An RNA of 207 nucleotides, treated with DMS and 2A3 and read out base by base.
For DMS, 7,374 sequencing reads were counted.
DMS adducts were read by reverse transcription with MarathonRT.
The RNA was probed in 150 mM KOAc, 10 mM MgCl2 and 150 mM bicine (pH 8.5) at 24 C.
2A3 adducts were read by reverse transcription with SuperScript II with manganese.
[RMDB]
RNA sequence: GGGAACGACUCGAGUAGAGUCGAAAAGAUUAAGUGGGAGCGUCGCCCUGUCGGUGCAUCGGAUAUUAAUUAGCCAGUGCGUGGCAGUACGCAUAUUGAUGUCUACUUUGGCGUAGACUUUGCCAAUUUAAGGAUUGUUGGGCAAUCCAGCCCUAGACGUAGCCUAUAUAUUCGUAUAUAGGCUACGAAAAGAAACAACAACAACAAC
Reactivity to DMS in 0.01 (KOAc 150mM, MgCl2 10mM, bicine 150mM(pH8.5), 24C), signal-to-noise 3, nucleotides 027 to 156: g010a110u010u000a040a120g010u000g010g010g020a130g030c030g030u000c050g000c020c040c030u000g010u000c010g010g020u010g010c000a030u000c010g000g010a070u000a090u010u010a120a140u010u000a090g030c000c040a050g030u010g000c020g040u010g020g000c070a060g010u000a040c050g010c080a090u010a080u000u000g000a080u000g010u020c020u000a030c020u000u000u010g020g020c110g010u000a060g000a070c040u000u010u010g020c020c010a030a100u010u010u020a090a100g020g010a100u000u000g020u010u010g000g010g020c040a000a120u000c070c050a120g010c000c010c010u000a070g000a180
Reactivity to 2A3 in 0.01 (KOAc 150mM, MgCl2 10mM, bicine 150mM(pH8.5), 24C), signal-to-noise 3, nucleotides 027 to 156: g040a020u140u180a080a030g030u100g040g050g010a070g030c050g030u080c040g060c020c030c010u040g050u050c030g000g060u070g040c060a070u090c050g050g000a020u060a030u130u170a230a060u080u120a060g020c040c040a030g010u020g030c020g030u020g020g000c070a060g060u090a030c020g000c040a000u020a070u090u110g080a040u080g020u000c000u000a030c010u070u110u180g070g000c050g040u010a000g000a020c000u020u040u050g000c010c010a050a040u010u090u100a120a040g060g030a080u030u090g040u060u050g020g010g000c030a000a040u060c020c010a020g000c010c010c000u000a040g000a020